[RMDB]
An RNA of 177 nucleotides, treated with DMS and 2A3 and read out base by base.
For 2A3, 6,522 sequencing reads were counted.
It was measured as part of the RMDB library OK1LIB.
Reactivities are given for positions 27 through 126.
2A3 adducts were read by reverse transcription with SuperScript II with manganese.
RNA sequence: GGGAACGACUCGAGUAGAGUCGAAAAAGGCCGAGAGAUCCGUUGGAGAACAGACAGAAGAAAAGGGGGACUUCCGUCCGCUCCCGGACCCCAAGAGAGACUGUCUUUGCGAUGCCGAACAAAGUCCCUCGUAAAAUCAGUUCGCUGAUUUUACGAGAAAAGAAACAACAACAACAAC
Reactivity to DMS in 0.01 (KOAc 150mM, MgCl2 10mM, bicine 150mM(pH8.5), 24C), signal-to-noise 5, nucleotides 027 to 126: a070g010g000c010c030g010a120g010a120g000a080u010c010c040g020u000u020g000g000a070g000a130a080c140a090g010a040c050a040g000a070a050g010a060a080a160a100g000g000g010g000g000a160c040u010u000c040c050g000u000c030c060g000c030u010c010c040c020g000g000a080c030c000c000c020a080a030g020a090g020a100g000a070c040u000g000u010c020u010u010u010g010c060g000a110u020g010c040c010g000a100a080c130a040a110a060g000u000c010c030
Reactivity to 2A3 in 0.01 (KOAc 150mM, MgCl2 10mM, bicine 150mM(pH8.5), 24C), signal-to-noise 6, nucleotides 027 to 126: a010g070g000c040c010g050a070g000a000g000a120u010c020c000g040u080u150g070g010a060g010a080a010c010a010g060a000c010a010g060a100a000g060a040a150a050a090g050g000g010g000g020a040c020u080u000c010c000g030u020c010c020g020c030u010c000c010c000g020g020a060c010c000c010c010a040a010g070a000g000a010g030a060c020u030g020u050c020u020u050u070g060c060g050a080u100g030c030c000g040a060a020c030a040a100a010g050u040c010c010